[RMDB]
This 177-nucleotide RNA was probed chemically with DMS and 2A3.
Values cover nucleotides 27 to 126.
DMS adducts were read by reverse transcription with MarathonRT.
It was measured as part of the RMDB library TTRDEL.

RNA sequence: GGGAACGACUCGAGUAGAGUCGAAAAGAUAUGGACGAGAGCGAUAAGCUACAGUCGGAAACGACUGAUAGCUUUUGACGCUCGAGUCCUAAGUCAAAACAAUAUAUGGGUUCGCCCAUAUAUUGAACUACAUAAGCUCGUUCGCGAGCUUAUGUAGAAAAGAAACAACAACAACAAC
Reactivity to DMS in 0.01 (KOAc 150mM, MgCl2 10mM, bicine 150mM(pH8.5), 24C), signal-to-noise 3, nucleotides 027 to 126: g000a020u020a100u000g000g010a010c010g000a300g000a010g000c000g030a050u010a040a010g010c000u010a010c000a010g020u010c010g010g010a010a010a070c000g010a020c000u000g000a070u000a010g010c000u000u000u010u000g000a300c020g000c000u020c010g000a300g000u000c000c000u000a010a070g000u010c000a090a100a090a270c000a010a000u000a000u000a000u000g000g000g040u000u010c280g010c000c000c000a000u000a000u000a000u000u000g000a070a220
Reactivity to 2A3 in 0.01 (KOAc 150mM, MgCl2 10mM, bicine 150mM(pH8.5), 24C), signal-to-noise 1, nucleotides 027 to 126: g000a010u010a010u080g000g000a020c010g020a010g010a000g090c000g040a060u070a300a000g000c000u000a010c000a000g000u000c000g010g000a030a030a010c000g010a010c000u020g020a110u010a010g000c000u040u000u040u090g020a000c000g000c000u020c000g020a000g000u020c000c000u000a010a000g010u000c030a040a000a120a090c000a000a000u000a000u010a000u000g010g000g060u030u050c300g120c030c000c000a000u010a000u010a000u000u010g000a020a030